[RMDB]
RNA sequence: GGGAACGACUCGAGUAGAGUCGAAAAGAUAUGGAUCUGGCUAGCAGAGCUCUAGCUCCCAACAGCGCUCUCGGAAACGAGAGCGACAUGGGAGCGAAGAGCGACGAAGCUAGCCAGAUCCUAAGUCCUAUUUUAGAUCGUUCGCGAUCUAAAAUAGAAAAGAAACAACAACAACAAC
Reactivity to DMS in 0.01 (KOAc 150mM, MgCl2 10mM, bicine 150mM(pH8.5), 24C), signal-to-noise 3, nucleotides 027 to 126: g000a080u000a300u000g010g000a020u000c000u000g010g020c000u010a000g050c000a070g000a170g020c000u000c000u000a300g010c000u000c000c000c000a030a090c220a220g000c000g010c000u000c000u010c000g020g000a090a120a210c010g000a020g000a000g030c000g000a010c080a150u020g000g020g000a030g010c010g000a070a060g000a000g010c000g010a070c280g000a130a120g000c000u000a000g010c000c000a000g000a000u000c010c000u000a000a060g020u000c030